The data come from the RNA Mapping Database (RMDB), libraries RFM100 and RFMREP. An RNA of 177 nucleotides, treated with DMS and 2A3 and read out base by base. For 2A3 the reverse transcriptase was SuperScript II with manganese.
[RMDB]
RNA sequence: GGGAACGACUCGAGUAGAGUCGAAAAAGACUAAGGUUUCCACAGCUAUGCUAAUCAGCUGUGGGUUAGUCAGGACCUAACGCGUACCCAAACGGGGAAGUGGAUGGACAACAGGUUAAUAUUCCUGAUAUGUCUUUAGUUUCGACUAAAGACAUAUAAAAGAAACAACAACAACAAC
Reactivity to DMS in 0.01 (KOAc 150mM, MgCl2 10mM, bicine 150mM(pH8.5), 24C), signal-to-noise 9, nucleotides 027 to 126: a090g000a020c000u000a010a030g010g020u020u040u060c000c000a010c000a000g000c010u000a070u020g020c260u040a110a080u020c190a020g010c000u000g010u000g000g000g000u000u000a000g010u000c010a110g010g010a120c010c010u010a090a160c040g000c020g010u010a300c010c010c000a060a110a150c240g000g000g010g000a170a210g010u000g000g000a140u020g010g000a120c110a100a240c040a020g000g000u000u000a100a100u020a150u010u010c000c000u000g000
Reactivity to 2A3 in 0.01 (KOAc 150mM, MgCl2 10mM, bicine 150mM(pH8.5), 24C), signal-to-noise 9, nucleotides 027 to 126: a010g010a010c010u010a020a040g190g040u070u180u070c000c000a000c000a000g000c000u060a020u270g070c050u160a150a120u190c080a050g000c000u000g000u000g020g000g000u000u000a000g000u000c010a000g020g100a050c000c000u040a120a030c010g020c010g070u150a050c020c000c000a110a260a130c170g000g000g010g010a040a020g010u020g020g050a090u130g040g030a020c020a110a010c010a080g020g020u030u060a090a050u050a140u120u040c000c000u010g040